Overview:
The data come from the RNA Mapping Database (RMDB), library 15KLIB. Structure probing data (2A3 and DMS) for a 170-nucleotide construct. For DMS the reverse transcriptase was MarathonRT. 2A3 adducts were read by reverse transcription with SuperScript II with manganese. The RNA was probed in 150 mM KOAc, 10 mM MgCl2 and 150 mM bicine (pH 8.5) at 24 C. Reactivities are rounded to 0.1 and cut off at 0 and 3.

RNA sequence: GGGAACGACUCGAGUAGAGUCGAAAAGGAGUCGACCUCCAUCUGAUCCGUCCUGGCUCUCUUCGCCGGGGGAGCUCCCUCCCCAUCCUUGUCCUUUCUUAUUAUUCCUCGGAUGUUCCCCAGCCAGCAACUUUUGCGUUCGCGCAAAAGAAAAGAAACAACAACAACAAC
Reactivity to 2A3 in 0.01 (KOAc 150mM, MgCl2 10mM, bicine 150mM(pH8.5), 24C), signal-to-noise 9, nucleotides 027 to 129: g030g010a020g030u070c050g080a160c030c010u000c010c000a050u040c050u090g070a070u030c030c030g050u050c050c020u010g010g000c010u020c010u010c030u150u150c070g040c050c010g000g000g000g000g000a000g010c010u040c010c000c010u020c020c000c000c000a060u060c000c020u020u050g060u080c010c000u040u090u110c030u060u080a180u120u080a120u090u090c000c000u030c010g030g000a050u080g010u010u010c000c020c000c000a010g000c010c010a010g010c010a040a050
Reactivity to DMS in 0.01 (KOAc 150mM, MgCl2 10mM, bicine 150mM(pH8.5), 24C), signal-to-noise 7, nucleotides 027 to 129: g000g040a050g060u020c060g030a190c130c020u040c010c070a130u000c070u000g030a100u040c080c080g030u040c040c050u030g000g000c040u000c050u020c070u040u030c040g020c070c070g010g000g030g020g000a100g000c060u050c030c030c010u010c020c000c000c010a120u040c000c050u010u030g030u040c020c030u010u010u010c070u000u000a120u050u020a140u000u000c030c000u000c040g050g020a100u000g030u030u030c040c020c010c020a040g030c070c050a080g030c070a050a080